An RNA of 177 nucleotides, treated with DMS and 2A3 and read out base by base.
As a SHAPE reagent, 2A3 marks flexible, mostly unpaired nucleotides at the ribose 2'-OH.
For DMS the reverse transcriptase was MarathonRT.
The DMS profile rests on 6,181 reads.
Conditions: 150 mM KOAc, 10 mM MgCl2 and 150 mM bicine (pH 8.5), 24 C.
Source: RMDB library OK1LIB, as collected in RNAgym.
The 2A3 profile rests on 9,918 reads.

RNA sequence: GGGAACGACUCGAGUAGAGUCGAAAACAUCAUAGGGCAAAAUUUCAGGAUGCCAUCUCUGCACACUCUGAAGUUGGGCGUGCAGCUUGCACGGCAGUUUCAUUCCAGCUCAGUGCGGCUCGCCGCACCUCAGGCAUCGAUUCGUCGAUGCCUGAGGAAAAGAAACAACAACAACAAC
Reactivity to DMS in 0.01 (KOAc 150mM, MgCl2 10mM, bicine 150mM(pH8.5), 24C), signal-to-noise 4, nucleotides 027 to 126: c130a080u020c060a060u030a190g000g000g000c020a020a030a090a090u000u010u020c140a110g050g010a150u000g010c060c020a080u040c020u000c030u000g000c030a020c020a050c030u000c020u010g000a090a110g020u010u030g000g020g000c040g000u000g000c020a010g000c140u020u020g000c110a030c030g010g000c060a020g010u000u010u020c110a140u020u030c080c060a120g020c040u000c050a110g010u000g000c000g010g000c040u020c270g030c000c000g020c060a110
Reactivity to 2A3 in 0.01 (KOAc 150mM, MgCl2 10mM, bicine 150mM(pH8.5), 24C), signal-to-noise 9, nucleotides 027 to 126: c050a040u170c040a050u190a100g050g020g000c060a050a080a120a160u100u190u100c050a040g060g030a040u040g020c000c010a100u030c030u010c020u040g020c020a010c010a020c030u050c020u050g110a110a070g110u140u060g030g010g010c010g040u120g000c010a000g020c010u120u270g000c020a020c010g030g000c010a020g040u030u100u140c060a060u110u010c060c040a020g000c010u020c040a010g010u010g040c000g000g000c020u040c080g040c010c000g000c010a020